[RMDB]
RNA sequence: GGGAACGACUCGAGUAGAGUCGAAAAGAUAUGGAUCGAACCUCCUUGUCAGAAGUCGCUGGCUGCUUUCGGAAACGAAAGACCCAGCCAAAAGUCUUCUUGGAUUUAGGAGGUUCGAUCCUAAGUCGUAUUUUACUCUGUUCGCAGAGUAAAAUACAAAAGAAACAACAACAACAAC
Reactivity to 2A3 in 0.01 (KOAc 150mM, MgCl2 10mM, bicine 150mM(pH8.5), 24C), signal-to-noise 1, nucleotides 027 to 126: g030a030u220a050u300g000g000a030u000c010g000a000a000c000c000u070c010c000u080u080g070u070c030a000g000a040a050g040u010c000g040c250u000g030g000c000u070g000c030u020u020u020c010g030g000a120a130a090c050g040a080a020a020g020a020c120c180c000a000g000c030c000a000a080a030a120g010u000c010u020u100c000u130u230g290g030a080u300u300u300a100g030g010a000g000g000u000u010c010g030a010u000c000c000u010a000a020g000u000c010
Reactivity to DMS in 0.01 (KOAc 150mM, MgCl2 10mM, bicine 150mM(pH8.5), 24C), signal-to-noise 3, nucleotides 027 to 126: g000a100u010a300u010g000g010a000u000c010g010a030a020c000c000u000c000c000u000u000g000u000c020a040g000a040a020g010u010c050g000c300u010g010g020c050u000g000c050u010u020u010c000g010g000a220a110a210c010g040a000a000a010g000a210c300c300c070a010g020c020c070a010a060a180a210g000u000c020u000u000c000u000u010g020g000a000u000u000u010a000g010g010a020g000g010u000u000c000g000a000u000c000c000u000a010a100g000u010c080
Annotation
Chemical mapping of a 177-nucleotide RNA with 2A3 and DMS. It was measured as part of the RMDB library TTRINS. The 2A3 profile rests on 1,296 reads. For 2A3 the reverse transcriptase was SuperScript II with manganese. The reactions ran in a buffer of 150 mM KOAc, 10 mM MgCl2 and 150 mM bicine (pH 8.5), at 24 C.